[RMDB]
RNA sequence: GGGAACGACUCGAGUAGAGUCGAAAAAAACGAGGUACAUUGCUUACCUUGUUAGCUUUGAGCGCCACCUGCUGGCUGAGGACUAGGACAUGAUCAUUACUUCCUUCAUUUAAAGUAUUAUGACGCUGUUAGAGAGAUUCAGUGAAUUUUAUAUGUAAUUAGGUAGGAGUUUCGACUCCUACCUAAUAAAAGAAACAACAACAACAAC
Reactivity to DMS in 0.01 (KOAc 150mM, MgCl2 10mM, bicine 150mM(pH8.5), 24C), signal-to-noise 2, nucleotides 027 to 156: a090a040a020c010g000a020g020g030u000a030c070a190u000u010g030c090u000u010a030c010c010u000u000g050u010u000a090g000c060u010u010u020g030a120g020c040g030c020c030a040c040c030u010g000c010u010g010g040c120u000g010a120g000g020a080c030u000a090g000g020a110c070a070u010g000a050u010c030a070u000u000a130c050u000u000c040c020u000u000c120a150u000u020u000a060a060a110g030u010a030u000u010a070u000g010a130c040g010c020u000g020u000u010a100g030a210g020a150g000a110u000u000c050a100g010u000g010a070a070u020u000u000u010a150u010a080u050g000u000a050
Reactivity to 2A3 in 0.01 (KOAc 150mM, MgCl2 10mM, bicine 150mM(pH8.5), 24C), signal-to-noise 3, nucleotides 027 to 156: a000a040a000c010g000a000g010g020u010a020c030a210u110u260g040c030u120u010a000c010c000u000u010g010u030u010a020g010c040u060u060u100g090a040g020c060g020c010c020a070c020c030u060g000c020u040g090g000c010u030g060a000g020g030a030c030u060a010g030g020a000c010a090u120g010a050u070c030a070u050u070a050c020u020u030c010c000u040u100c070a140u050u110u170a110a130a020g010u020a010u210u070a050u110g030a010c040g000c010u020g020u090u090a020g020a010g000a010g030a110u120u020c020a000g010u010g020a010a020u070u010u090u160a240u020a020u190g020u060a100
Structure probing data (DMS and 2A3) for a 207-nucleotide construct. The DMS profile rests on 4,680 reads. It was measured as part of the RMDB library OK3TST.